[RMDB]
RNA sequence: GGGAACGACUCGAGUAGAGUCGAAAAAGAUGGCUAAAAUCUGAGUUUGAGAGCAGCAUGCCACAGAUGCUUGGAUUUUACUAUUGGAUUUUGCUGCCGGAAUAGGGCUUUCGGGACACUUAUUCCUUCUGGAGACGAAGUUCGCUUCGUCUCCAGAAAAAGAAACAACAACAACAAC
Reactivity to 2A3 in 0.01 (KOAc 150mM, MgCl2 10mM, bicine 150mM(pH8.5), 24C), signal-to-noise 2, nucleotides 027 to 126: a000g000a020u020g010g020c080u000a000a010a010a000u000c000u000g040a050g050u000u150u240g160a170g010a040g020c020a020g040c030a100u250g000c010c000a090c070a040g070a090u160g020c000u010u060g040g010a040u000u010u030u070a020c000u000a020u050u120g050g000a050u010u020u020u150g090c090u030g080c010c010g040g000a010a040u060a090g000g000g000c000u000u030u130c090g030g040g010a030c050a000c030u030u030a060u020u010c010c000u000